[RMDB]
RNA sequence: GGGAACGACUCGAGUAGAGUCGAAAAACGUUGAUAAGGAUUUACUCCGAGGAGACGAACUACCACGAACAGGGGAAACUCUACCCGUGGCGUCUCCGUUUGACGAGUAAGUCCUAAGUCAACAUGCAAGCGAUGGACUUCGGUCCAUCGAAAAGAAACAACAACAACAAC
Reactivity to DMS in 0.01 (KOAc 150mM, MgCl2 10mM, bicine 150mM(pH8.5), 24C), signal-to-noise 4, nucleotides 027 to 129: a000c180g040u040u020g020a020u010a080a000g010g030a010u020u030u040a020c010u040c000c010g050a080g040g060a020g000a020c020g000a080a040c070u130a300c080c010a050c000g000a000a000c000a160g000g030g010g030a070a040a000c000u020c010u020a180c290c250c020g070u020g000g030c040g010u070c010u010c000c000g060u040u060u090g000a190c300g030a060g020u010a000a000g000u050c000c000u000a000a050g010u020c000a000a010c010a090u050g030c250a080a080g080
Reactivity to 2A3 in 0.01 (KOAc 150mM, MgCl2 10mM, bicine 150mM(pH8.5), 24C), signal-to-noise 3, nucleotides 027 to 129: a000c100g000u000u000g000a000u000a000a000g000g000a000u000u000u010a000c000u000c000c000g020a040g010g000a010g030a000c010g000a030a020c080u260a100c090c010a000c000g020a030a020c020a090g020g000g000g000a000a000a000c000u000c010u010a020c010c030c000g000u000g000g000c010g000u000c000u000c010c000g000u030u040u070g000a000c000g000a000g000u010a000a000g000u000c000c000u000a000a000g000u010c000a000a000c000a000u070g060c040a060a090g060